[RMDB]
RNA sequence: GGGAACGACUCGAGUAGAGUCGAAAAAAGAAACAUUGUUUAUGCAAAGGCACUUCGCAAUAUGUGCUCAAACAUUGCUUAUUCAAACACGCUUCACAAUGUGCGACAAAGAAACAUUGUUAUAAGAUCCACUAAGUCGCCUUCGGGCGACUUAGAACAAUACGUUGAACUUCGGUUCAACGUAUUGAAAAGAAACAACAACAACAAC
Reactivity to 2A3 in 0.01 (KOAc 150mM, MgCl2 10mM, bicine 150mM(pH8.5), 24C), signal-to-noise 8, nucleotides 027 to 156: a000a000g140a020a070a000c060a050u060u050g020u020u060u050a070u090g020c030a040a070a090g010g000c010a010c020u110u090c140g040c180a070a080u150a070u250g010u010g000c020u060c080a080a100a010c080a060u020u040g000c010u060u060a040u090u060c030a010a050a020c070a010c070g010c010u010u020c000a000c000a010a020u010g000u010g010c010g030a050c130a070a190a020g090a030a060a000c000a010u010u010g010u040u050a110u020a070a050g050a060u050c020c010a040c050u000a000a000g000u000c000g000c000c010u030u070c150g060g000g000c000g000a000c000u000u000a000g000a000a000
Reactivity to DMS in 0.01 (KOAc 150mM, MgCl2 10mM, bicine 150mM(pH8.5), 24C), signal-to-noise 4, nucleotides 027 to 156: a120a100g010a170a040a040c030a040u000u000g030u000u010u000a060u010g000c040a100a110a080g000g020c000a020c020u000u000c230g030c190a190a110u000a060u000g020u000g000c010u010c050a100a100a040c020a030u000u000g010c010u000u000a170u000u000c080a090a080a090c060a100c060g010c070u000u000c090a070c060a020a030u000g040u000g000c020g020a180c080a060a030a110g000a120a030a020c020a020u000u000g020u000u010a090u010a070a090g000a130u000c030c040a170c000u000a000a020g020u000c010g030c000c010u000u010c270g070g030g040c010g010a010c000u000u000a000g000a050a100